Annotation:
Chemical mapping of a 177-nucleotide RNA with DMS and 2A3. The RNA was probed in 150 mM KOAc, 10 mM MgCl2 and 150 mM bicine (pH 8.5) at 24 C. The DMS profile rests on 1,054 reads. The 2A3 profile rests on 2,070 reads.
RNA sequence: GGGAACGACUCGAGUAGAGUCGAAAAGAUAUGGAUUCAGCUCAUAACGUCGCCAGUCGGAAACGACUGCGAUAUCAAGCUGAUCCUAAGUCAAACUUAAUUCAUGUGUUCGCACAUGAAUUAAGAACUAACGAUCCAACUUCGGUUGGAUCGUUAGAAAAGAAACAACAACAACAAC
Reactivity to DMS in 0.01 (KOAc 150mM, MgCl2 10mM, bicine 150mM(pH8.5), 24C), signal-to-noise 2, nucleotides 027 to 126: g000a030u000a150u000g000g000a030u000u010c010a030g020c000u000c200a140u000a070a090c220g000u010c000g030c270c150a010g000u000c000g050g000a010a030a170c000g030a030c000u000g010c010g010a000u000a060u020c180a080a020g000c000u000g010a110u000c000c010u000a010a070g000u000c060a090a040a160c000u010u000a010a010u000u000c000a000u000g010u000g000u000u000c180g080c000a000c000a000u000g000a000a000u000u000a000a010g010a030a190
Reactivity to 2A3 in 0.01 (KOAc 150mM, MgCl2 10mM, bicine 150mM(pH8.5), 24C), signal-to-noise 2, nucleotides 027 to 126: g000a010u030a020u070g010g020a000u300u200c000a010g010c020u050c110a260u260a300a290c240g000u010c010g090c300c170a000g000u000c000g020g000a000a080a030c000g000a000c010u000g000c000g000a000u030a190u150c030a020a000g000c020u000g000a000u000c000c000u000a010a020g000u030c070a040a030a130c030u010u000a000a000u040u000c010a000u000g000u000g000u030u120c290g000c090a010c000a000u040g000a000a000u000u000a000a000g000a010a000